[RMDB]
RNA sequence: GGGAACGACUCGAGUAGAGUCGAAAACCAAGCUGCGAUAAGCCUGAGGGAGCCGCACGGAGGCUAAGAACUCAGGAUCUCCUAAUGGGAAUCCCUAUAACAAUUGCCUUGCGCAAUGGGGAACGGCUUUACAAUGCUCCUUCGGGAGCAUUGUAAAAAAAGAAACAACAACAACAAC
Reactivity to DMS in 0.01 (KOAc 150mM, MgCl2 10mM, bicine 150mM(pH8.5), 24C), signal-to-noise 4, nucleotides 027 to 126: c000c000a110a060g010c040u020g010c140g000a130u050a100a110g010c010c000u010g000a060g000g000g020a010g030c010c030g030c180a150c300g020g030a130g020g000c020u000a070a120g000a120a190c020u020c010a030g030g000a030u010c040u010c000c010u010a040a130u030g000g030g010a160a130u000c010c000c010u010a130u030a110a090c170a110a020u010u000g000c010c030u020u000g000c080g000c000a030a010u010g010g000g010g000a070a150c060g000g010c060
Reactivity to 2A3 in 0.01 (KOAc 150mM, MgCl2 10mM, bicine 150mM(pH8.5), 24C), signal-to-noise 6, nucleotides 027 to 126: c000c000a020a010g020c030u060g020c060g120a070u070a190a040g030c000c000u020g010a010g010g020g010a010g010c000c000g090c050a090c150g130g130a090g020g000c000u010a060a030g050a030a000c010u000c010a000g010g000a010u010c010u020c020c010u110a160a100u200g040g000g040a050a080u070c010c000c000u080a090u040a160a090c110a050a000u010u020g010c000c010u180u300g050c120g000c100a000a010u030g000g000g000g000a010a040c020g030g000c000
The data come from the RNA Mapping Database (RMDB), library RFM100. Structure probing data (DMS and 2A3) for a 177-nucleotide construct. DMS adducts were read by reverse transcription with MarathonRT. Values are in units of 0.01, from 0 to 300, in steps of 10. For 2A3 the reverse transcriptase was SuperScript II with manganese. The RNA was probed in 150 mM KOAc, 10 mM MgCl2 and 150 mM bicine (pH 8.5) at 24 C.